[RMDB]
RNA sequence: GGGAACGACUCGAGUAGAGUCGAAAAGAAAGAAAGAAAGAAAUCUGACAGAAUGACGGAUUCGAUCGUUGUGGUCGGCGGGCCACCACGUCAUUCCUUCGCACUGUCUCCGGGCAGACCGCCAUUAAAAAGCGGAUCUACUUCGGUAGAUCCGCAACAUAGUUGCACCCUUCGGGGUGCAACUAUGAAAAGAAACAACAACAACAAC
Reactivity to 2A3 in 0.01 (KOAc 150mM, MgCl2 10mM, bicine 150mM(pH8.5), 24C), signal-to-noise 1, nucleotides 027 to 156: g040a020a140a010g050a020a090a020g120a040a150a040g170a090a170a040u080c110u070g000a040c020a050g210a220a110u150g000a100c060g000g010a020u080u040c090g010a050u090c110g060u020u030g020u000g050g000u020c150g000g040c070g070g020g040c010c000a000c000c010a020c020g030u010c000a010u040u030c000c000u080u050c020g000c040a050c030u010g000u010c050u010c080c150g000g000g010c040a000g010a150c020c100g040c000c000a080u100u190a130a100a040a030a010g000c000g020g010a000u000c000u000a000c000u030u040c100g060g000u000a000g000a000u010c000c000g000c000a000a000